[RMDB]
RNA sequence: GGGAACGACUCGAGUAGAGUCGAAAAUACUAACAAGAUAUGGAUGGAGCUCGUAGAAGCUAUGAAGGGCUUCGGAAACGAAGCCUGGAGCUUGCGAAGAGCUAUGAAGUCCUAAGUCAACGCGAAAGAAUUAAACGAGGUUCGCCUCGUUUAAUUCAAAAGAAACAACAACAACAAC
Reactivity to 2A3 in 0.01 (KOAc 150mM, MgCl2 10mM, bicine 150mM(pH8.5), 24C), signal-to-noise 1, nucleotides 027 to 126: u160a060c120u110a190a160c050a120a120g060a030u090a040u300g000g000a010u050g070g010a020g050c010u020c020g010u020a030g060a070a010g000c000u110a300u300g000a000a050g000g010g040c000u020u000c030g000g000a020a000a000c020g000a040a000g000c030c000u000g000g020a000g030c010u010u040g020c010g080a140a050g000a000g030c000u010a030u000g000a000a020g010u000c000c000u080a090a010g030u020c040a020a040c040g000c070g220a220a050a230
Reactivity to DMS in 0.01 (KOAc 150mM, MgCl2 10mM, bicine 150mM(pH8.5), 24C), signal-to-noise 2, nucleotides 027 to 126: u000a170c040u010a070a150c190a080a160g000a060u000a300u000g000g000a050u030g000g020a010g020c000u000c000g000u000a230g000a030a000g010c010u000a040u000g010a200a100g000g000g020c000u000u000c000g020g000a090a070a180c000g000a000a020g000c000c000u000g010g000a000g020c010u000u000g020c020g010a110a300g000a010g030c000u010a140u000g010a110a170g000u000c000c000u000a050a140g020u000c020a050a150c150g000c140g000a090a090a170